Notes: An RNA of 177 nucleotides, treated with DMS and 2A3 and read out base by base.

RNA sequence: GGGAACGACUCGAGUAGAGUCGAAAAGAUAGCUCGUUCGCGAGCUAUCAAAUAGGCGCAGUGGGCUAGCGCCACUCAAAAGGCCGAAAGGAAGAGAGAGAAAAAGGUGGUCCUUCGGGACCACCAACCAAGUGUAAGAGUUCGCUCUUACACUUGGAAAAGAAACAACAACAACAAC
Reactivity to DMS in 0.01 (KOAc 150mM, MgCl2 10mM, bicine 150mM(pH8.5), 24C), signal-to-noise 3, nucleotides 027 to 126: g010a020u010a010g000c000u010c010g010u000u010c200g030c000g030a000g000c010u000a000u010c020a030a100a120u000a120g000g010c010g010c010a240g010u010g010g020g010c060u010a070g000c040g000c000c020a020c030u000c060a060a020a040a100g000g010c010c000g000a090a050a080g000g000a030a030g000a080g010a070g010a100g000a050a040a060a140a090g010g010u000g010g000u000c000c000u010u000c220g020g000g010a000c010c000a000c000c010a010a030
Reactivity to 2A3 in 0.01 (KOAc 150mM, MgCl2 10mM, bicine 150mM(pH8.5), 24C), signal-to-noise 2, nucleotides 027 to 126: g010a000u000a000g000c000u000c010g040u040u060c230g030c010g100a000g000c000u000a000u010c000a010a000a020u080a010g010g000c010g000c020a020g110u110g060g110g010c030u020a030g000c010g000c020c000a050c010u020c000a040a060a010a000g040g000c010c020g040a090a060a020g060g030a050a030g030a010g020a000g010a010g070a040a080a010a040a020g000g000u000g000g000u000c000c000u010u010c130g030g000g000a000c000c000a000c000c000a000a000
It was measured as part of the RMDB library M2PK50. The RNA was probed in 150 mM KOAc, 10 mM MgCl2 and 150 mM bicine (pH 8.5) at 24 C.